[RMDB]
RNA sequence: GGGAACGACUCGAGUAGAGUCGAAAAGAUAUGGACGUAGCUAGCCUCCCGAUCGGAAACGAUCGGAGAGGCUUGGACCUACCGUCCUAAGUCAAAAUCCUGAAUCUCCUUCGGGAGAUUCAGGAAACUAACGGUCUAACUUCGGUUAGACCGUUAGAAAAGAAACAACAACAACAAC
Reactivity to DMS in 0.01 (KOAc 150mM, MgCl2 10mM, bicine 150mM(pH8.5), 24C), signal-to-noise 1, nucleotides 027 to 126: g000a050u010a300u000g000g000a000c000g000u000a010g000c030u000a030g020c000c010u000c000c000c020g010a000u000c000g000g010a090a090a160c000g020a010u000c000g000g000a070g050a010g000g030c000u000u010g000g000a080c250c010u010a030c140c110g020u000c000c000u000a030a080g000u000c060a060a060a090a240u000c000c000u000g010a030a000u000c000u000c000c000u000u000c140g020g000g020a000g000a000u000u000c010a000g010g000a010a020a100
Chemical mapping of a 177-nucleotide RNA with DMS. The DMS profile rests on 1,003 reads. DMS adducts were read by reverse transcription with MarathonRT.